RNA sequence: GGGAACGACUCGAGUAGAGUCGAAAAAGGUGAUGAGGCUUGCCACGGUAAAGUGUCCGCUUAAUUGAGCAACGUCGAACCCCUCAAUGGCGCGGGGGAGUUUGUCCAUCCCCAGCGCAUGUUUGAGCCCUUCGUAUCCUUUCGAGGAUACGAAGGGAAAAGAAACAACAACAACAAC
Reactivity to 2A3 in 0.01 (KOAc 150mM, MgCl2 10mM, bicine 150mM(pH8.5), 24C), signal-to-noise 2, nucleotides 027 to 126: a030g030g030u080g010a110u050g030a040g030g050c050u010u010g000c000c020a100c090g000g060u180a180a160a040g070u080g090u100c030c020g020c030u090u160a090a050u280u100g040a060g000c030a010a020c030g040u010c000g010a070a050c010c000c000c020u020c030a030a040u050g000g020c010g020c000g000g000g000g040g000a000g000u040u180u160g080u000c070c000a090u020c020c000c010c000a000g000c010g000c000a010u200g060u060u020u020g030a020g000
Reactivity to DMS in 0.01 (KOAc 150mM, MgCl2 10mM, bicine 150mM(pH8.5), 24C), signal-to-noise 1, nucleotides 027 to 126: a070g000g020u000g010a090u000g010a150g010g000c070u010u000g010c100c060a030c130g010g030u020a060a040a070g020u000g000u000c000c060g020c110u010u000a050a190u000u000g000a070g020c020a070a080c080g000u000c040g010a080a190c010c000c020c000u000c030a000a010u000g000g000c010g010c010g000g000g000g000g000a020g000u000u010u000g000u010c160c100a220u000c010c000c000c020a060g010c010g000c000a020u000g000u000u000u000g010a020g030
Record summary:
Chemical mapping of a 177-nucleotide RNA with 2A3 and DMS. For 2A3, 1,294 sequencing reads were counted. The DMS profile rests on 1,201 reads. The RNA was probed in 150 mM KOAc, 10 mM MgCl2 and 150 mM bicine (pH 8.5) at 24 C.